[RMDB]
RNA sequence: GGGAACGACUCGAGUAGAGUCGAAAAGAUAUGGAGGCUGAACCGAUAUGACAGCCAUGGAGCUCUGUGUCGGAAACGACACCGAGCCUUGAAGUGGCUGUCAUAUCGGUUUUGGCCUCCUAAGUCACAACGUGGUUAACUUCGGUUAACCACGUUGAAAAGAAACAACAACAACAAC
Reactivity to DMS in 0.01 (KOAc 150mM, MgCl2 10mM, bicine 150mM(pH8.5), 24C), signal-to-noise 1, nucleotides 027 to 126: g020a090u000a300u010g000g010a010g000g010c000u020g000a010a020c020c010g020a020u000a010u020g000a030c000a000g000c000c000a010u020g000g010a130g000c000u040c010u000g020u000g000u000c020g000g050a190a110a290c010g020a030c000a030c000c110g000a000g030c010c300u000u000g000a080a200g030u000g010g000c000u000g000u000c000a010u000a000u000c000g000g000u010u010u000u000g060g030c000c000u000c000c000u000a020a060g030u000c080a210